[RMDB]
The data come from the RNA Mapping Database (RMDB), library OK1LIB. The record gives the reactivity of an RNA of 177 nucleotides to DMS and 2A3.
RNA sequence: GGGAACGACUCGAGUAGAGUCGAAAAGAAAAAGUCGUCGAGUCCGGAGAAUAUCGGUAGUGGAUACGAGAUCCGGAGUAUCGACUACAAAGAUAUCGAGACGAAAGUCUCGAGAGACGACGAAAAAGGGUAAAAUAUGGUUCGCCAUAUUUUACCCAAAAGAAACAACAACAACAAC
Reactivity to DMS in 0.01 (KOAc 150mM, MgCl2 10mM, bicine 150mM(pH8.5), 24C), signal-to-noise 4, nucleotides 027 to 126: g010a070a050a060a110a120g010u000c000g020u000c000g000a170g030u000c020c010g020g010a060g010a170a090u030a020u010c000g000g000u010a040g030u040g000g010a030u020a010c020g000a110g000a140u020c100c030g000g000a100g010u000a010u000c010g000a100c040u010a030c090a090a060a100g000a030u000a020u000c010g000a000g000a000c010g000a150a080a180g010u000c000u000c000g000a010g000a220g000a010c000g000a030c000g040a050a040a100a130a090
Reactivity to 2A3 in 0.01 (KOAc 150mM, MgCl2 10mM, bicine 150mM(pH8.5), 24C), signal-to-noise 3, nucleotides 027 to 126: g080a000a080a010a010a000g030u010c010g000u020c010g000a040g040u010c030c000g100g030a060g040a110a050u050a020u060c000g040g000u020a040g070u040g130g080a020u030a070c010g000a000g020a140u010c020c030g060g010a010g010u010a030u010c010g040a010c000u010a000c000a000a110a000g030a000u030a040u020c000g000a000g010a000c000g060a020a060a010g000u010c000u000c000g000a000g000a000g000a000c020g000a000c040g040a050a050a010a000a000
For 2A3 the reverse transcriptase was SuperScript II with manganese.